[RMDB]
An RNA of 177 nucleotides, treated with 2A3 and DMS and read out base by base. The reactions ran in a buffer of 150 mM KOAc, 10 mM MgCl2 and 150 mM bicine (pH 8.5), at 24 C. Reactivities are rounded to 0.1 and cut off at 0 and 3. 2A3 adducts were read by reverse transcription with SuperScript II with manganese. For 2A3, 14,210 sequencing reads were counted.

RNA sequence: GGGAACGACUCGAGUAGAGUCGAAAAUUGAUGAGUGCGUUAAUGCUAUGAAAGUACUUAGGUUAGGAUUCACCGAUAAAUAUAUCGAGAAGCAGGAGCCUAUCGAUGUAGUAUUCGAUAAGUACCAAUUUGACGAAAUAUUCGUAUUUCGUCAAAUAAAAGAAACAACAACAACAAC
Reactivity to 2A3 in 0.01 (KOAc 150mM, MgCl2 10mM, bicine 150mM(pH8.5), 24C), signal-to-noise 9, nucleotides 027 to 126: u130u130g040a050u060g030a030g070u080g010c070g050u080u130a160a050u190g040c060u080a060u170g090a110a100a030g010u010a020c010u020u020a020g080g050u100u060a040g060g070a160u100u050c060a060c110c000g020a010u050a050a140a000u080a010u010a000u020c020g010a010g010a090a000g020c030a060g120g290a060g030c010c000u010a020u010c010g000a000u020g020u040a040g030u030a080u010u060c020g030a030u010a070a020g020u020a010c000c010a040
Reactivity to DMS in 0.01 (KOAc 150mM, MgCl2 10mM, bicine 150mM(pH8.5), 24C), signal-to-noise 9, nucleotides 027 to 126: u020u030g010a060u010g000a090g020u010g000c060g000u010u020a090a090u030g010c060u030a070u020g000a100a100a130g010u000a030c030u010u010a030g010g010u000u010a070g010g010a150u010u020c070a120c110c030g000a040u020a050a100a100u000a010u000a010u000c010g010a030g000a100a300g000c010a210g010g010a150g010c010c000u000a280u000c010g000a010u000g010u000a020g000u010a090u010u000c030g000a070u000a010a040g000u010a050c020c080a060